[RMDB]
RNA sequence: GGGAACGACUCGAGUAGAGUCGAAAAAUGGGCACAGAAGGCUCAUUUGCCAGCUUACUGUCCUCUUUGGCAUGACUGCAAAUAGAUAAUAUACUGCCUGAUUAAAACAAAAUCUCAACAUUUGUCUCUGCACCUGCGAUAGCCUAUUAAAGCAAAAAUACGUAAUCACUUUCGAGUGAUUACGUAUAAAAGAAACAACAACAACAAC
Reactivity to DMS in 0.01 (KOAc 150mM, MgCl2 10mM, bicine 150mM(pH8.5), 24C), signal-to-noise 3, nucleotides 027 to 156: a060u010g010g010g000c020a180c040a220g010a120a180g000g020c010u000c040a060u000u000u000g020c040c040a120g020c030u010u000a090c110u010g040u000c010c120u010c110u000u020u020g020g000c000a100u010g030a070c050u010g010c030a050a060a100u010a120g020a130u000a110a110u010a160u000a050c040u000g000c010c020u020g030a130u000u020a060a070a090a130c050a030a080a090a130u000c040u010c080a040a080c060a170u000u000u000g000u000c040u010c030u000g000c060a080c010c010u020g020c050g010a110u000a110g030c020c020u000a120u010u000a050a040a070g030c060a020a050a070a110
Reactivity to 2A3 in 0.01 (KOAc 150mM, MgCl2 10mM, bicine 150mM(pH8.5), 24C), signal-to-noise 7, nucleotides 027 to 156: a000u050g010g000g000c060a070c050a160g190a160a060g090g000c000u000c020a020u050u020u030g030c020c010a020g020c040u040u090a060c040u070g040u080c020c000u070c040u110u120u110g020g000c020a020u080g030a080c030u030g000c020a010a050a070u080a070g050a020u080a170a040u090a080u030a110c040u030g020c010c010u050g030a080u060u180a080a090a050a050c060a030a130a030a070u050c070u030c060a040a150c030a110u030u060u100g030u010c010u000c010u050g000c020a030c050c020u020g010c020g040a070u060a050g010c000c010u070a100u160u140a140a050a020g020c040a030a050a020a020